[RMDB]
RNA sequence: GGGAACGACUCGAGUAGAGUCGAAAACCCUUAGCAUUCGUGCUAAGGGAAAAAACGGUCGGCUCAUGCAGCUAGUCGAAAAUGCUGCUCGACCUUUUGGUAAAAUCUGGCCGUUCGCGGCCAGAAAGACAUCAAUAUUAUUCGUAAUAUUGAUGUCAAAAGAAACAACAACAACAAC
Reactivity to DMS in 0.01 (KOAc 150mM, MgCl2 10mM, bicine 150mM(pH8.5), 24C), signal-to-noise 7, nucleotides 027 to 126: c000c000c000u000u000a000g010c000a040u000u010c180g030u000g010c000u000a000a020g000g010g010a000a020a020a020a020a020c120g010g010u010c000g010g000c170u000c150a070u010g000c010a010g010c010u000a200g010u010c200g010a050a100a080a090u010g010c010u000g010c010u000c010g000a020c000c000u000u000u000u000g010g010u010a070a060a110a100u000c000u000g000g010c000c000g020u000u010c180g030c010g000g000c000c000a000g000a010a040a080
Reactivity to 2A3 in 0.01 (KOAc 150mM, MgCl2 10mM, bicine 150mM(pH8.5), 24C), signal-to-noise 6, nucleotides 027 to 126: c000c000c010u000u000a000g000c000a020u000u050c190g080u050g010c000u000a000a000g000g000g000a180a090a000a000a000a000c080g010g000u010c000g010g010c060u050c300a040u180g000c000a000g000c010u060a040g210u190c070g070a080a000a020a040u140g000c000u000g000c010u030c010g010a000c000c000u000u060u020u030g030g020u100a030a040a010a110u020c000u000g010g010c020c000g010u020u050c270g010c000g100g010c000c000a000g000a000a000a000
Overview:
The data come from the RNA Mapping Database (RMDB), library M2PK50. Structure probing data (DMS and 2A3) for a 177-nucleotide construct. The 2A3 profile rests on 14,364 reads. Values are in units of 0.01, from 0 to 300, in steps of 10. For DMS the reverse transcriptase was MarathonRT. The reactions ran in a buffer of 150 mM KOAc, 10 mM MgCl2 and 150 mM bicine (pH 8.5), at 24 C.